This 177-nucleotide RNA was probed chemically with 2A3 and DMS. Values are in units of 0.01, from 0 to 300, in steps of 10. The RNA was probed in 150 mM KOAc, 10 mM MgCl2 and 150 mM bicine (pH 8.5) at 24 C. DMS adducts were read by reverse transcription with MarathonRT.
RNA sequence: GGGAACGACUCGAGUAGAGUCGAAAAGAUAUGGAUAGCGGGAGCACUACUAUACGCCGGUGAAAUACGUAGCUUUCGGAAACGAAAGCUACGGAGUAUACUAGUGCGAAGAACGCUAUCCUAAGUCGACGUAUACGUCGUUCGCGACGUAUACGUCAAAAGAAACAACAACAACAAC
Reactivity to 2A3 in 0.01 (KOAc 150mM, MgCl2 10mM, bicine 150mM(pH8.5), 24C), signal-to-noise 3, nucleotides 027 to 126: g020a050u140a030u220g010g000a000u000a000g020c010g010g000g040a050g030c010a000c000u010a000c000u000a010u010a020c040g110c140c120g250g090u290g180a130a130a050u300a110c070g020u020a000g000c000u000u000u010c020g020g030a040a080a080c010g000a000a000a010g000c010u000a000c000g010g000a000g010u010a000u010a000c030u030a000g010u000g040c040g030a110a000g010a030a000c000g000c000u000a010u010c000c000u010a060a010g110u060c050
Reactivity to DMS in 0.01 (KOAc 150mM, MgCl2 10mM, bicine 150mM(pH8.5), 24C), signal-to-noise 4, nucleotides 027 to 126: g020a100u000a230u010g000g020a020u000a020g010c000g000g000g010a120g030c000a010c000u000a020c150u000a010u000a020c010g030c160c160g020g010u010g010a080a100a150u010a110c100g020u000a000g010c000u000u000u000c000g000g010a100a100a210c020g020a010a000a010g010c000u000a000c000g000g000a090g010u000a010u000a010c150u000a030g020u000g010c000g000a090a130g020a090a180c010g010c020u000a000u010c000c010u000a030a090g010u010c110